[RMDB]
RNA sequence: GGGAACGACUCGAGUAGAGUCGAAAAAACGUUGCAUGAUCGUAAAACAUGCCCGGCUUACCGUGAGCCGCCUUUGAAAGAAAGGUUUACACGGACCCUGUUGCGUUACGCACGUACCUAACUUGUGAAAACGGCAUCUUGUUCGCAAGAUGCCGAACCAUCCUAUAAACUUCGGUUUAUAGGAUGGAAAAGAAACAACAACAACAAC
Reactivity to DMS in 0.01 (KOAc 150mM, MgCl2 10mM, bicine 150mM(pH8.5), 24C), signal-to-noise 1, nucleotides 027 to 156: a060a050c050g020u000u010g010c000a010u010g010a090u000c030g000u000a070a040a020a050c010a020u000g010c000c040c020g000g020c000u000u000a080c020c090g030u000g010a090g030c020c020g000c010c000u000u000u000g000a230a160a270g050a090a030a030g000g010u010u000u000a110c030a070c000g020g020a190c090c060c060u030g030u010u000g020c050g010u010u000a080c120g010c010a060c130g000u010a090c060c010u000a050a050c050u000u000g000u000g000a070a050a080a140c010g040g020c000a010u000c000u000u020g010u000u000c250g000c020a000a020g000a000u000g010c060c000g010a000a010
Reactivity to 2A3 in 0.01 (KOAc 150mM, MgCl2 10mM, bicine 150mM(pH8.5), 24C), signal-to-noise 6, nucleotides 027 to 156: a000a000c010g000u010u000g000c010a000u000g020a070u230c040g090u260a120a040a000a020c000a010u000g000c000c000c000g000g000c000u020u080a090c000c000g010u000g000a010g000c000c000g000c000c000u030u020u000g060a100a040a000g020a010a010a000g020g000u000u050u040a020c000a000c000g030g020a050c050c010c020u080g040u080u050g030c030g020u040u050a070c170g030c030a010c030g030u050a050c010c030u040a060a130c050u100u080g060u050g160a070a050a020a020c000g000g000c000a010u020c000u010u030g020u070u050c080g010c130a010a000g000a010u000g000c000c000g000a000a000
Source: RMDB library M2RFOK, as collected in RNAgym. Structure probing data (DMS and 2A3) for a 207-nucleotide construct. For 2A3 the reverse transcriptase was SuperScript II with manganese. The reactions ran in a buffer of 150 mM KOAc, 10 mM MgCl2 and 150 mM bicine (pH 8.5), at 24 C. The DMS profile rests on 3,110 reads.